[RMDB]
RNA sequence: GGGAACGACUCGAGUAGAGUCGAAAAAAGCGGGCUCAGCCCGGCUUCUACAAGCCUCUCUUGCGUACCUUCGCCGACGUCAAAUAGGUACACUAGACCACGGUACAUCACAGCUAUUGACGGUAAGGCCCGUAACUAUUUUCGAAUAGUUACGGGCAAAAGAAACAACAACAACAAC
Reactivity to DMS in 0.01 (KOAc 150mM, MgCl2 10mM, bicine 150mM(pH8.5), 24C), signal-to-noise 1, nucleotides 027 to 126: a040a030g010c050g000g000g000c030u000c140a220g000c000c010c010g050g060c010u000u010c060u000a070c200a130a130g050c010c020u030c050u010c050u010u000g000c040g000u000a040c020c010u000u000c080g000c020c020g030a040c030g000u010c030a010a070a110u000a010g000g020u000a020c030a060c070u000a090g000a100c080c080a100c180g030g010u000a010c000a090u010c120a080c190a110g000c000u020a080u010u000g010a070c030g000g000u010a090a050g000
Reactivity to 2A3 in 0.01 (KOAc 150mM, MgCl2 10mM, bicine 150mM(pH8.5), 24C), signal-to-noise 1, nucleotides 027 to 126: a000a010g030c020g000g000g030c100u140c300a040g010c030c010c010g160g040c000u010u020c000u120a150c030a120a040g010c020c000u020c010u000c020u070u050g000c030g060u070a160c010c020u040u050c020g050c050c040g080a110c010g000u040c040a040a060a210u110a030g000g070u010a020c030a020c060u090a030g060a060c050c010a030c040g000g030u050a050c030a040u120c030a020c020a050g000c030u090a020u120u020g020a010c020g040g060u060a070a040g070